[RMDB]
RNA sequence: GGGAACGACUCGAGUAGAGUCGAAAAACGUGGCAUGCUUACGAGCAUGCCACGAAAUUAUACGACAAACCUUGUUCGGUUUUGCCAAUUUCCAAGCCAGCACUGGGUAAAGUUUGUCCUAUAAUAAUCUGAGGAAAAAGUUCGCUUUUUCCUCAGAAAAAGAAACAACAACAACAAC
Reactivity to DMS in 0.01 (KOAc 150mM, MgCl2 10mM, bicine 150mM(pH8.5), 24C), signal-to-noise 2, nucleotides 027 to 126: a110c010g010u000g000g010c020a000u010g000c000u000u010a120c200g000a030g050c000a010u020g010c020c000a000c000g000a000a060a040u000u010a000u010a030c300g000a020c020a030a010a020c000c070u000u000g000u000u000c010g010g010u000u000u000u010g000c090c040a080a120u010u030u040c140c190a080a100g000c140c090a020g000c080a030c040u000g000g020g000u000a010a040a030g000u000u010u000g000u000c010c090u000a000u000a010a030u000a100a080
Reactivity to 2A3 in 0.01 (KOAc 150mM, MgCl2 10mM, bicine 150mM(pH8.5), 24C), signal-to-noise 3, nucleotides 027 to 126: a000c020g010u010g010g000c010a010u000g010c010u060u040a070c270g030a030g010c000a000u000g010c000c000a010c010g000a000a000a000u000u000a010u000a000c020g000a000c010a000a000a030c000c000u020u000g010u030u030c040g000g030u020u060u050u110g020c030c000a070a050u090u090u080c100c040a060a020g050c050c020a010g000c030a010c050u020g010g000g070u080a020a040a040g010u040u010u010g000u000c000c000u010a000u010a070a010u040a030a080